An RNA of 207 nucleotides, treated with 2A3 and DMS and read out base by base.
[RMDB]
RNA sequence: GGGAACGACUCGAGUAGAGUCGAAAACAGGUGCAGGAAAACAAGCGCGAAAGGCUGGCCUGGCACCCAGGCAUCAGAAUAGACAGCGUGUGAGCAGAAGGUGUCCGGAAGUUAUGCACAGCAGCUGACGCCACAGUGCAAAAUGUCUCAGUGCAUAGCGUGCAAUAGAAUUCGUUCUAUUGCACGCAAAAGAAACAACAACAACAAC
Reactivity to 2A3 in 0.01 (KOAc 150mM, MgCl2 10mM, bicine 150mM(pH8.5), 24C), signal-to-noise 2, nucleotides 027 to 156: c030a010g010g020u070g000c000a000g050g010a040a100a100a040c100a190a060g020c100g000c020g170a140a020a020g110g000c000u010g030g010c010c000u010g060g000c010a080c020c030c000a000g000g000c000a040u030c020a050g100a150a040u040a050g110a070c040a030g020c030g030u070g000u010g100a050g010c010a020g030a100a020g020g010u000g040u010c000c010g080g060a030a000g050u140u020a030u090g020c010a010c000a080g040c010a000g000c010u030g030a030c060g000c000c020a120c080a050g080u110g070c000a010a110a000a050u080g090u020c000u000c060a050g000u020g000c000a050u040a050
Reactivity to DMS in 0.01 (KOAc 150mM, MgCl2 10mM, bicine 150mM(pH8.5), 24C), signal-to-noise 1, nucleotides 027 to 156: c040a080g040g030u000g000c060a040g000g020a090a070a060a130c040a060a160g000c040g020c030g000a140a190a200g000g000c030u000g020g010c050c010u010g000g000c050a050c030c010c000a060g020g030c000a110u010c030a040g020a180a070u000a120g010a060c070a090g010c050g000u000g000u000g010a120g030c020a120g000a090a110g030g000u000g010u000c000c020g000g010a080a090g030u010u000a050u000g020c030a070c050a130g000c030a110g000c010u030g000a080c090g060c000c020a080c060a070g000u000g000c050a060a060a070a160u000g000u000c020u000c030a180g010u000g020c060a060u000a130

Annotation
Source: RMDB library OK3TST, as collected in RNAgym. 2A3 adducts were read by reverse transcription with SuperScript II with manganese. In probing experiments dimethyl sulfate is read out at A N1 and C N3, which are open when not base-paired.